Background
An RNA of 177 nucleotides, treated with 2A3 and DMS and read out base by base. The reactions ran in a buffer of 150 mM KOAc, 10 mM MgCl2 and 150 mM bicine (pH 8.5), at 24 C. For DMS, 1,269 sequencing reads were counted. For 2A3 the reverse transcriptase was SuperScript II with manganese.
RNA sequence: GGGAACGACUCGAGUAGAGUCGAAAACAUCGCGUCGCGCACGCCGCCGGUCUUGGAGUGCGCGAUGAACUCCACGGUGCCGGUGUCGUCGAACGGGCCGCCGCGCGAGGUGCCGACGAUCUCCAGACCGGGCUAAUAAUUUCGAUUAUUAGCCCGGAAAAGAAACAACAACAACAAC
Reactivity to 2A3 in 0.01 (KOAc 150mM, MgCl2 10mM, bicine 150mM(pH8.5), 24C), signal-to-noise 1, nucleotides 027 to 126: c050a040u140c060g020c000g070u010c010g020c030g040c020a000c050g090c030c020g010c030c000g040g010u090c030u080u110g010g000a030g000u010g000c040g000c010g040a000u000g010a010a000c000u020c020c000a040c040g030g010u090g150c020c040g000g040u030g050u010c040g040u010c030g040a070a070c060g030g000g000c060c050g040c000c020g050c000g000c030g000a090g000g090u050g030c000c000g030a050c020g000a070u040c010u010c060c000a030g040a040
Reactivity to DMS in 0.01 (KOAc 150mM, MgCl2 10mM, bicine 150mM(pH8.5), 24C), signal-to-noise 1, nucleotides 027 to 126: c150a100u020c060g020c020g040u000c150g040c040g000c090a030c000g000c060c020g010c010c010g020g000u010c060u000u000g020g010a030g000u000g020c040g010c080g000a020u020g020a130a060c050u000c020c020a100c100g010g000u000g020c040c000g000g000u000g010u000c050g000u000c040g010a060a150c070g010g000g030c020c120g020c000c070g020c150g030c030g010a040g000g010u000g000c080c010g010a110c060g000a120u000c070u000c000c050a110g010a240